[RMDB]
RNA sequence: GGGAACGACUCGAGUAGAGUCGAAAAGAAGUCGUGUCUUAGCAGAAACGAUACAACGCACGAGAUUCCAAGGUCUCUGUAGAACGACCGCUUGUGACGUCAUAGCUAUCACGUUCGACAUACGACAGGUAUGAAGUAGGUUCGCCUACUUCAUACCAAAAGAAACAACAACAACAAC
Reactivity to 2A3 in 0.01 (KOAc 150mM, MgCl2 10mM, bicine 150mM(pH8.5), 24C), signal-to-noise 4, nucleotides 027 to 126: g180a070a010g010u040c000g010u010g010u040c020u080u110a040g070c040a000g100a040a050a010c040g000a000u030a020c030a020a010c020g020c010a020c020g010a020g000a080u250u100c100c050a060a050g030g000u000c010u000c040u120g190u190a090g060a140a070c060g020a030c000c020g000c020u020u000g000u030g050a180c000g020u030c020a080u060a090g010c040u010a020u060c030a020c120g020u060u040c020g040a020c020a060u170a020c010g020a010c020a030
Reactivity to DMS in 0.01 (KOAc 150mM, MgCl2 10mM, bicine 150mM(pH8.5), 24C), signal-to-noise 3, nucleotides 027 to 126: g010a090a100g020u010c000g000u040g030u020c100u000u000a040g040c050a030g010a170a130a050c120g010a110u000a050c130a070a000c050g020c030a010c040g000a020g000a120u010u050c140c140a160a110g000g010u010c040u020c080u020g040u000a090g050a080a130c190g000a010c080c060g000c020u000u000g000u000g030a090c010g020u010c080a100u020a210g000c020u000a020u030c120a050c150g000u040u000c140g000a070c050a110u010a050c060g000a050c200a040